The record gives the reactivity of an RNA of 177 nucleotides to DMS and 2A3.
As a SHAPE reagent, 2A3 marks flexible, mostly unpaired nucleotides at the ribose 2'-OH.
RNA sequence: GGGAACGACUCGAGUAGAGUCGAAAAUCCUUCACACCCAGGUCCACCCCGACCGCGCUGCCGGUCUCGGGCUGCGGUUCGGGGUCGUCGGUGUCCACGGCCAAGGUCACAUACCAGCGGCCAUCCGCGAGACUAUAGGCUUCGGCCUAUAGUCUCGAAAAGAAACAACAACAACAAC
Reactivity to DMS in 0.01 (KOAc 150mM, MgCl2 10mM, bicine 150mM(pH8.5), 24C), signal-to-noise 2, nucleotides 027 to 126: u010c000c010u000u040c110a130c080a040c010c010c180a180g050g020u010c130c150a220c010c000c040c000g060a030c000c000g000c030g000c130u000g010c020c000g070g040u020c200u040c050g000g010g020c030u030g000c040g010g000u020u000c000g050g000g020g010u000c010g000u000c100g000g000u000g050u000c160c140a070c160g020g070c000c020a100a300g010g000u000c250a140c170a120u010a200c090c000a050g030c300g000g000c000c020a010u010c160c240g070
Reactivity to 2A3 in 0.01 (KOAc 150mM, MgCl2 10mM, bicine 150mM(pH8.5), 24C), signal-to-noise 2, nucleotides 027 to 126: u010c000c000u080u160c020a020c000a000c000c000c060a150g150g150u050c020c040a010c000c000c010c000g000a000c020c000g000c020g170c300u130g030c030c000g090g210u300c180u170c100g090g010g010c000u060g000c010g000g030u120u150c000g000g000g000g000u000c010g020u000c010g000g010u020g000u080c060c030a110c060g000g000c000c000a040a070g040g020u050c080a080c020a300u170a060c010c030a030g000c030g000g000c000c000a000u010c000c010g070
It was measured as part of the RMDB libraries RFM100 and RFMREP.